This 207-nucleotide RNA was probed chemically with 2A3 and DMS.
In probing experiments dimethyl sulfate is read out at A N1 and C N3, which are open when not base-paired.

RNA sequence: GGGAACGACUCGAGUAGAGUCGAAAAGGAUCUAUCAUUCUGCAACUUGCUUUUUUUCCAUUUAGUAUUAGACCUCAGAGAGCUUCUCACCUCAGCGGGUACAUCUCCCUACUUCUUAUUAGCUGCUGUGGGGCUUGCGUAGUGUGGAUGCCCCGUGGCAUAUCAACUAGUUCGCUAGUUGAUAUGCAAAAGAAACAACAACAACAAC
Reactivity to 2A3 in 0.01 (KOAc 150mM, MgCl2 10mM, bicine 150mM(pH8.5), 24C), signal-to-noise 6, nucleotides 027 to 156: g040g000a070u040c020u060a050u090c060a100u110u080c040u080g050c040a080a090c050u060u080g040c050u130u070u050u040u030u070u070c060c040a120u150u120u150a060g030u020a080u110u070a070g050a050c010c010u020c040a010g050a010g000a010g100c010u080u020c020u020c020a060c020c010u050c020a010g010c020g020g020g000u050a110c030a060u030c060u040c020c010c010u030a050c030u070u120c020u070u140a170u100u150a110g040c030u070g010c020u030g020u090g050g010g030g000c010u050u070g000c030g040u050a040g030u060g060u090g120g030a020u020g020c000c010c000c010g010u030g060
Reactivity to DMS in 0.01 (KOAc 150mM, MgCl2 10mM, bicine 150mM(pH8.5), 24C), signal-to-noise 2, nucleotides 027 to 156: g010g010a060u010c030u000a100u000c040a120u010u000c020u010g020c020a090a080c100u010u010g000c010u020u000u000u000u010u030u000c050c030a170u000u010u010a090g040u000a150u000u000a090g010a070c030c020u020c050a070g010a170g000a080g020c010u010u000c050u000c060a080c040c020u000c050a100g000c070g000g030g030u000a050c040a090u010c050u000c030c020c010u000a060c020u010u010c100u000u000a110u000u000a120g010c040u000g010c030u000g030u000g030g010g050g000c060u000u000g030c090g030u010a120g020u010g000u010g000g010a120u000g000c100c020c000c010g060u000g010